[RMDB]
The data come from the RNA Mapping Database (RMDB), library TTRDES.
The record gives the reactivity of an RNA of 177 nucleotides to DMS.
The RNA was probed in 150 mM KOAc, 10 mM MgCl2 and 150 mM bicine (pH 8.5) at 24 C.

RNA sequence: GGGAACGACUCGAGUAGAGUCGAAAAAAAAAAGAUAUGGAUCGCAGAGGAGAGGUAUGUCACAGUGGGUCGGAAACGACCCAUCACAGCAUACUACCCACCUCCGAUCGAUCCUAAGUCAAAAAAACACUUUAGUUACCUUCGGGUAACUAAAGUGAAAAGAAACAACAACAACAAC
Reactivity to DMS in 0.01 (KOAc 150mM, MgCl2 10mM, bicine 150mM(pH8.5), 24C), signal-to-noise 2, nucleotides 027 to 126: a000a000a070a050a080a110g060a070u030a180u030g000g000a000u000c000g050c270a010g000a230g000g000a070g010a150g050g000u000a000u000g000u000c140a070c300a280g000u000g000g020g010u000c000g020g000a070a060a040c000g010a010c000c000c020a000u000c040a140c250a160g000c010a000u000a010c000u000a100c040c020c080a300c050c000u000c000c010g020a260u000c000g020a060u000c000c000u000a030a030g010u000c000a020a010a070a010a040a040a040